[RMDB]
Conditions: 150 mM KOAc, 10 mM MgCl2 and 150 mM bicine (pH 8.5), 24 C. Chemical mapping of a 207-nucleotide RNA with 2A3. Values cover nucleotides 27 to 156. For 2A3, 795 sequencing reads were counted. For 2A3 the reverse transcriptase was SuperScript II with manganese.

RNA sequence: GGGAACGACUCGAGUAGAGUCGAAAAGGCGUGCCAGGACGGCAUCCCCACGCUGCACCUCGAGUACGGGUGCGACGACGACGUCGAAUUCGUGUACCUCGUCGGCCGCCACGACCUGGCGACGGAGGUGGCGCCGUGAGCCUCGCCGACAUCGACCGUUAACUCUGUCGUUCGCGACAGAGUUAACAAAAGAAACAACAACAACAAC
Reactivity to 2A3 in 0.01 (KOAc 150mM, MgCl2 10mM, bicine 150mM(pH8.5), 24C), signal-to-noise 1, nucleotides 027 to 156: g070g000c040g020u040g040c040c110a070g120g050a030c060g020g000c010a080u040c000c000c000c030a030c020g000c020u010g050c010a040c000c010u030c040g100a080g080u120a050c010g040g030g010u040g020c020g070a040c000g000a000c000g010a020c040g000u050c040g050a080a070u140u030c130g020u120g050u130a080c000c020u040c000g040u000c000g030g030c040c000g010c020c000a000c030g060a040c000c030u010g010g020c010g030a080c070g090g050a160g050g040u010g000g060c040g000c010c010g000u020g050a050g000c010c030u060c020g030c000c000g060a080c050a110u090c070g090a090c010c010